[RMDB]
RNA sequence: GGGAACGACUCGAGUAGAGUCGAAAAUGACGCCUAUAACUGGAUGAAGCAUAUUAUACAAAAUGGUUUUGUAGGCAACCUUAAUAUGUAUAGUCUUGUCUUUAUCGUUACACGAUAAUCAAUUUAUAUCUCUACCAAAAUUCGUUUUGGUAGAGAUAAAAGAAACAACAACAACAAC
Reactivity to DMS in 0.01 (KOAc 150mM, MgCl2 10mM, bicine 150mM(pH8.5), 24C), signal-to-noise 5, nucleotides 027 to 126: u030g020a150c230g020c000c000u000a010u000a010a150c120u000g000g010a010u010g010a180a020g000c000a010u000a000u000u000a010u000a100c160a050a090a120a110u050g000g010u000u000u030u000g020u000a010g000g020c020a030a010c000c000u000u000a020a010u000a020u000g000u000a030u000a300g000u000c010u000u000g010u020c090u000u000u000a000u000c000g010u000u020a070c190a180c020g000a000u000a010a020u030c160a050a070u020u010u010a090u000
Reactivity to 2A3 in 0.01 (KOAc 150mM, MgCl2 10mM, bicine 150mM(pH8.5), 24C), signal-to-noise 9, nucleotides 027 to 126: u130g060a030c040g000c000c000u010a010u010a050a040c070u060g020g000a010u020g010a020a000g000c000a000u010a010u010u020a030u040a090c210a090a110a040a150u190g000g000u010u000u000u010g010u000a000g010g000c000a000a000c000c000u000u010a010a000u000a000u010g010u010a010u000a010g000u000c000u010u030g090u030c140u030u090u010a010u000c000g020u020u070a100c160a020c070g010a010u030a020a030u080c060a050a080u000u160u100a230u040
Structure probing data (DMS and 2A3) for a 177-nucleotide construct. For 2A3 the reverse transcriptase was SuperScript II with manganese. DMS adducts were read by reverse transcription with MarathonRT.